[RMDB]
RNA sequence: GGGAACGACUCGAGUAGAGUCGAAAACUAGGCAGGCGCCAUCGCGCCCGUACCGCAAACCGACACAGGUGGGUGGGUAGAACAUACCGAGGCGAUCGGGUCAACCAUGGUUAAGGAACUCGGCACACAGAUGGUACUCUUUCGAGAGUACCAUCUGAAAAGAAACAACAACAACAAC
Reactivity to DMS in 0.01 (KOAc 150mM, MgCl2 10mM, bicine 150mM(pH8.5), 24C), signal-to-noise 4, nucleotides 027 to 126: c040u030a040g000g040c090a080g020g030c050g020c030c060a050u020c100g000c100g000c020c030c010g010u010a110c070c020g000c150a040a070a040c090c000g020a140c160a110c180a180g020g040u000g000g010g020u020g010g000g010u000a040g020a080a120c140a110u010a040c020c030g000a080g000g010c050g000a090u010c010g000g000g020u020c050a110a100c020c050a110u040g000g000u000u030a070a090g010g000a090a060c020u000c000g000g010c120a090c120a210
Reactivity to 2A3 in 0.01 (KOAc 150mM, MgCl2 10mM, bicine 150mM(pH8.5), 24C), signal-to-noise 4, nucleotides 027 to 126: c030u030a040g100g000c080a010g010g020c000g020c020c050a170u080c130g030c010g020c000c010c020g060u050a040c000c000g060c060a020a090a050c020c030g110a090c040a030c040a200g010g010u060g050g030g040u110g000g020g010u020a110g030a140a030c030a070u060a040c000c020g030a030g050g060c080g010a060u030c030g000g000g030u070c020a000a050c020c000a060u090g070g040u080u120a100a020g020g010a010a000c010u000c000g020g000c000a000c000a000